[RMDB]
An RNA of 177 nucleotides, treated with DMS and 2A3 and read out base by base. For 2A3, 1,468 sequencing reads were counted. For DMS, 2,234 sequencing reads were counted. DMS adducts were read by reverse transcription with MarathonRT. The data come from the RNA Mapping Database (RMDB), library 15KREP.
RNA sequence: GGGAACGACUCGAGUAGAGUCGAAAAUAAUGAGACAAAUUCUCAAUAUUUGUUUAGUACUAUUAAUGCUCUACCAGAAACUUCUGCCGAUAUUCUGGUGGUUGAUGAGGUUAGUAUGUGCACUAAUUACUCGAUUAUAGUUCGCUAUAAUCGAGUAAAAAGAAACAACAACAACAAC
Reactivity to DMS in 0.01 (KOAc 150mM, MgCl2 10mM, bicine 150mM(pH8.5), 24C), signal-to-noise 3, nucleotides 027 to 126: u000a050a100u000g000a040g010a060c110a110a110a130u010u000c040u010c010a030a080u000a040u000u000u010g010u010u000u010a100g020u000a020c020u000a010u000u010a020a030u000g020c010u000c000u000a030c010c010a010g000a050a030a180c220u000u010c020u010g050c270c170g010a070u000a100u000u000c020u000g000g000u000g010g030u000u000g010a070u020g010a050g010g000u000u000a020g000u000a020u010g020u010g010c040a220c100u000a040a140u000
Reactivity to 2A3 in 0.01 (KOAc 150mM, MgCl2 10mM, bicine 150mM(pH8.5), 24C), signal-to-noise 2, nucleotides 027 to 126: u030a010a060u080g030a000g000a050c040a040a220a100u190u000c010u000c010a020a030u060a060u050u110u070g030u000u070u070a020g000u000a010c000u000a020u080u010a040a010u090g070c000u010c010u000a010c000c000a020g050a130a300a300c040u040u020c050u110g160c050c030g020a020u030a090u100u000c000u020g000g010u050g030g000u050u060g080a130u090g010a020g010g030u000u000a000g000u000a030u180g030u010g000c030a020c060u020a010a080u020